Conditions: 150 mM KOAc, 10 mM MgCl2 and 150 mM bicine (pH 8.5), 24 C.
Structure probing data (DMS and 2A3) for a 170-nucleotide construct.
In probing experiments dimethyl sulfate is read out at A N1 and C N3, which are open when not base-paired.
It was measured as part of the RMDB library 15KLIB.
DMS adducts were read by reverse transcription with MarathonRT.
RNA sequence: GGGAACGACUCGAGUAGAGUCGAAAAAGGAUCGGUAGAAAAGAGCGAGACCUCCGAUUCGAGAGCUCCUGGACUCCUCGGCUCUGGAGUCCUCCGACCCGUGAGGUCGAGGAUCCCCGCGCAGGGAAUAGUCACCUCUUCGGAGGUGACAAAAGAAACAACAACAACAAC
Reactivity to DMS in 0.01 (KOAc 150mM, MgCl2 10mM, bicine 150mM(pH8.5), 24C), signal-to-noise 5, nucleotides 027 to 129: a040g030g000a030u020c050g030g000u060a090g030a090a070a070a080g020a080g040c100g000a100g040a040c110c030u000c060c030g020a080u010u020c080g000a070g010a150g010c070u040c040c040u030g010g010a100c080u010c070c000u010c070g000g000c030u010c050u030g010g030a100g000u000c010c040u040c070c090g030a030c040c030c010g060u050g000a140g040g010u060c010g020a050g000g000a130u020c040c030c010c010g050c180g040c100a090g000g000g000a080a050u040a120
Reactivity to 2A3 in 0.01 (KOAc 150mM, MgCl2 10mM, bicine 150mM(pH8.5), 24C), signal-to-noise 6, nucleotides 027 to 129: a000g040g000a030u020c020g010g010u170a030g090a050a130a050a010g140a020g070c070g040a000g040a080c000c010u000c030c010g000a000u010u040c040g000a020g000a000g080c020u020c030c010u020g030g030a030c020u030c010c010u020c060g040g010c020u000c040u080g010g000a040g030u010c000c010u020c020c050g010a000c010c000c020g130u170g080a130g010g030u010c020g000a020g000g000a010u060c020c000c000c000g060c000g000c060a050g000g010g050a030a030u070a080